[RMDB]
RNA sequence: GGGAACGACUCGAGUAGAGUCGAAAACAGGGUACUUAUUGCCGUGCACUACCGGUCGGCAGUAGGUAUUUUGCCAGAGACGGAGUGCGAGCAGUCAGCGAGCUGGAGGGUCUGGUGAGUGCGCACAUGUACUUUGUGGGUUCGCCCACAAAGUACAAAAAGAAACAACAACAACAAC
Reactivity to 2A3 in 0.01 (KOAc 150mM, MgCl2 10mM, bicine 150mM(pH8.5), 24C), signal-to-noise 1, nucleotides 027 to 126: c000a020g010g070g030u000a020c000u020u040a020u080u000g000c020c060g030u150g010c010a030c170u230a200c090c010g070g000u040c010g010g000c000a020g010u020a010g000g040u040a030u010u050u040u010g020c010c020a040g070a000g030a090c060g080g050a060g020u070g020c020g030a050g000c000a010g040u070c010a000g040c000g050a020g060c070u070g020g060a030g030g020g030u060c030u100g060g010u060g040a080g030u090g020c040g000c010a010c020a060
Reactivity to DMS in 0.01 (KOAc 150mM, MgCl2 10mM, bicine 150mM(pH8.5), 24C), signal-to-noise 2, nucleotides 027 to 126: c050a050g010g000g000u010a020c040u000u000a000u000u010g020c000c000g000u010g030c020a060c100u000a150c150c140g010g010u000c010g000g010c000a000g010u000a010g010g010u000a030u020u000u010u000g000c010c050a190g000a110g010a110c070g020g000a100g020u000g040c030g010a150g040c070a070g000u000c110a100g010c090g000a100g010c040u000g010g020a090g020g000g000u000c030u000g000g010u020g000a090g000u000g010c000g000c060a050c120a100
Chemical mapping of a 177-nucleotide RNA with 2A3 and DMS. For 2A3 the reverse transcriptase was SuperScript II with manganese. The reactions ran in a buffer of 150 mM KOAc, 10 mM MgCl2 and 150 mM bicine (pH 8.5), at 24 C. Reactivities are given for positions 27 through 126.